[RMDB]
This 177-nucleotide RNA was probed chemically with 2A3.
As a SHAPE reagent, 2A3 marks flexible, mostly unpaired nucleotides at the ribose 2'-OH.
Reactivities are given for positions 27 through 126.
2A3 adducts were read by reverse transcription with SuperScript II with manganese.
The reactions ran in a buffer of 150 mM KOAc, 10 mM MgCl2 and 150 mM bicine (pH 8.5), at 24 C.
RNA sequence: GGGAACGACUCGAGUAGAGUCGAAAACGCUCAUAACAUCUGGAAUGAUGCCAAAAGAAAGGGUGCCUAUCGUCCACCAGACCGAUAACAGGGCGUGAAAACGAACUUUAUCAAGCAUCGGACGACAAGUGCCCUGGUGUUUCGACACCAGGGCACUAAAAGAAACAACAACAACAAC
Reactivity to 2A3 in 0.01 (KOAc 150mM, MgCl2 10mM, bicine 150mM(pH8.5), 24C), signal-to-noise 1, nucleotides 027 to 126: c010g000c000u000c000a210u180a140a090c020a000u040c050u000g110g110a140a000u120g020a000u080g010c020c000a210a300a040a000g190a020a060a110g080g070g010u080g020c080c070u090a030u000c020g000u000c000c000a010c000c000a070g000a000c000c160g000a000u000a010a070c070a010g000g030g000c000g000u000g050a000a000a000a000c050g000a000a000c020u100u170u000a020u140c090a220a000g110c000a000u030c090g000g030a000c000g000a000c000a080